[RMDB]
RNA sequence: GGGAACGACUCGAGUAGAGUCGAAAAGAUUGCGGCCGCACUUCUGCUGUCCGUCUGGUCGUAAAGGGUCUUCUGGUUCCUCCGAAGUCUGGACAUGCGGCCCUUUGCUUCCGACUCGGGAACGAAGUCUACGUUCGUAAUUCGUUACGAACGUAGAAAAAGAAACAACAACAACAAC
Reactivity to 2A3 in 0.01 (KOAc 150mM, MgCl2 10mM, bicine 150mM(pH8.5), 24C), signal-to-noise 3, nucleotides 027 to 126: g040a020u050u120g040c100g020g020c020c010g050c050a020c040u210u150c070u170g130c040u050g050u010c000c000g020u010c050u080g080g010u060c030g020u050a050a050a050g030g000g000u030c000u170u060c080u220g170g000u160u040c010c000u000c020c010g100a110a020g050u080c140u210g040g030a010c010a040u110g030c050g000g030c000c000c000u020u040u040g010c000u020u020c000c000g030a030c010u010c030g000g020g030a070a040c050g030a090a020g050
Reactivity to DMS in 0.01 (KOAc 150mM, MgCl2 10mM, bicine 150mM(pH8.5), 24C), signal-to-noise 5, nucleotides 027 to 126: g000a090u010u000g010c100g020g010c020c100g020c060a110c210u000u010c100u010g020c130u010g010u000c020c020g010u010c040u010g020g000u000c090g020u000a050a050a060g010g010g000u000c030u000u000c100u000g010g010u000u000c020c010u000c100c060g000a080a090g020u010c030u020g030g000a030c070a050u000g010c290g010g010c000c010c010u000u000u010g000c020u000u000c060c000g000a050c030u000c010g020g010g010a080a060c050g000a060a090g010
Chemical mapping of a 177-nucleotide RNA with 2A3 and DMS. Conditions: 150 mM KOAc, 10 mM MgCl2 and 150 mM bicine (pH 8.5), 24 C. Source: RMDB library OK2TRN, as collected in RNAgym. DMS adducts were read by reverse transcription with MarathonRT.